[RMDB]
RNA sequence: GGGAACGACUCGAGUAGAGUCGAAAAAUCAUGUCCUAUAAUACAAAGCGUGCCCUCUCACAGACAUUAAUGCAGUAGUACUAGUGCUGAGAGAGAAAAUUAAAUGCGUUCUUGGUCUUUGAACCAGGAAGAUCGGUGCAUUCGUGCACCGAUCUUCAAAAGAAACAACAACAACAAC
Reactivity to 2A3 in 0.01 (KOAc 150mM, MgCl2 10mM, bicine 150mM(pH8.5), 24C), signal-to-noise 1, nucleotides 027 to 126: a020u050c020a000u120g100u000c000c000u100a120u180a130a170u000a060c110a050a000a010g000c000g000u000g000c000c060c000u000c020u030c000a090c000a030g180a200c000a000u060u070a020a020u080g110c110a090g000u300a080g000u000a050c000u000a030g040u040g000c000u050g000a030g030a000g000a000g030a030a030a030a030u230u240a070a000a010u110g030c000g040u000u080c060u000u000g000g000u000c070u000u260u220g000a050a000c030c000a000g020
This 177-nucleotide RNA was probed chemically with 2A3. 2A3 adducts were read by reverse transcription with SuperScript II with manganese. The reactions ran in a buffer of 150 mM KOAc, 10 mM MgCl2 and 150 mM bicine (pH 8.5), at 24 C. Reactivities are given for positions 27 through 126.